[RMDB]
RNA sequence: GGGAACGACUCGAGUAGAGUCGAAAAGAUAUGGACCGAGUGAGGUCGUCGAAGAACUUCCUACCCACCAGUGGCUCGGAAACGAGCCCACUGAGGGAAGGGAGACGACCUCACUCGGUCCUAAGUCCAAGUAUUUAGUCUUCGGACUAAAUACUUGAAAAGAAACAACAACAACAAC
Reactivity to DMS in 0.01 (KOAc 150mM, MgCl2 10mM, bicine 150mM(pH8.5), 24C), signal-to-noise 3, nucleotides 027 to 126: g000a100u010a300u000g020g030a010c010c000g010a020g020u000g010a010g010g030u000c010g010u010c000g000a160a240g000a160a260c070u000u000c000c000u010a080c080c030c080a300c180c000a000g000u000g010g010c000u000c000g000g000a080a100a210c000g000a010g000c190c020c020a000c000u000g000a120g010g000g010a060a010g000g000g000a100g000a010c010g010a010c000c010u000c020a000c000u000c000g000g000u000c000c000u010a000a070g000u010c050